The record gives the reactivity of an RNA of 177 nucleotides to DMS and 2A3. The DMS profile rests on 922 reads. The RNA was probed in 150 mM KOAc, 10 mM MgCl2 and 150 mM bicine (pH 8.5) at 24 C. DMS adducts were read by reverse transcription with MarathonRT.
[RMDB]
RNA sequence: GGGAACGACUCGAGUAGAGUCGAAAAGCAAGCUUUGCUCAAAGCUUCAGAGACAAUGCUCAUGAAAGCCUAUGCCUUCCUCAAAUACAAUAAUGCAACAAAUUUGAUUGUCAGGACCCAUUUGGCAUCUGCUUAAGGUGUUCGCACCUUAAGCAGAAAAAGAAACAACAACAACAAC
Reactivity to DMS in 0.01 (KOAc 150mM, MgCl2 10mM, bicine 150mM(pH8.5), 24C), signal-to-noise 2, nucleotides 027 to 126: g030c110a060a030g000c020u010u000u010g000c120u030c190a030a030a030g010c000u000u020c060a110g010a240g000a090c050a080a080u010g020c000u010c060a080u030g020a140a090a090g020c000c020u000a050u010g010c000c020u020u010c030c010u010c070a070a030a060u030a100c090a020a020u010a070a050u010g020c030a080a040c070a060a060a150u010u000u020g000a080u000u000g010u000c000a040g000g000a120c040c030c030a160u000u020u000g000g000c100a120
Reactivity to 2A3 in 0.01 (KOAc 150mM, MgCl2 10mM, bicine 150mM(pH8.5), 24C), signal-to-noise 2, nucleotides 027 to 126: g020c010a030a000g010c000u060u060u150g080c050u160c190a100a070a010g050c000u040u040c040a070g030a000g030a040c030a060a050u110g000c000u020c020a050u110g090a140a040a000g020c020c010u050a070u060g000c000c000u040u000c020c000u050c020a090a080a030u110a010c020a020a070u110a140a020u230g050c050a020a070c010a050a160a070u150u130u110g100a070u030u030g030u040c020a020g020g050a060c010c000c050a040u020u080u070g040g010c020a040